[RMDB]
RNA sequence: GGGAACGACUCGAGUAGAGUCGAAAACUUGUCGAUGUGCUUACCCAUCAGCACCGUGGUGCACAACAGCCCGUAGGGGAGCGACGCCAGCACGACCUCCCAACCGCCCGCGCCCACCGCGGCGUAGCGUGGACGGUUCUUUCGAGAACCGUCCACGAAAAGAAACAACAACAACAAC
Reactivity to DMS in 0.01 (KOAc 150mM, MgCl2 10mM, bicine 150mM(pH8.5), 24C), signal-to-noise 1, nucleotides 027 to 126: c000u000u000g000u000c010g010a030u000g050u000g070c030u000u000a160c000c070c060a180u000c000a080g080c080a040c040c030g040u000g020g000u000g000c000a120c200a000a190c160a140g000c000c000c050g050u000a200g000g000g000g100a060g000c080g000a110c160g030c020c100a110g200c000a000c050g000a210c070c000u020c010c000c010a080a070c130c000g000c050c030c060g130c060g000c000c000c100a100c080c040g020c000g000g000c140g060u000a050g000
Reactivity to 2A3 in 0.01 (KOAc 150mM, MgCl2 10mM, bicine 150mM(pH8.5), 24C), signal-to-noise 2, nucleotides 027 to 126: c040u040u010g020u080c050g100a130u110g020u030g030c010u040u060a050c000c000c010a010u070c050a010g000c000a000c010c020g090u080g030g020u090g000c020a020c020a120a140c000a090g060c030c000c020g070u160a060g000g000g090g020a000g010c050g060a010c060g020c000c000a030g000c040a050c030g030a020c000c040u010c000c000c000a030a050c020c020g040c020c010c030g000c010g000c000c000c000a120c070c000g020c110g000g050c010g050u030a020g040
Source information: An RNA of 177 nucleotides, treated with DMS and 2A3 and read out base by base. 2A3 is a SHAPE reagent: it acylates the 2'-hydroxyl of flexible nucleotides of all four kinds. Conditions: 150 mM KOAc, 10 mM MgCl2 and 150 mM bicine (pH 8.5), 24 C. For DMS the reverse transcriptase was MarathonRT. 2A3 adducts were read by reverse transcription with SuperScript II with manganese.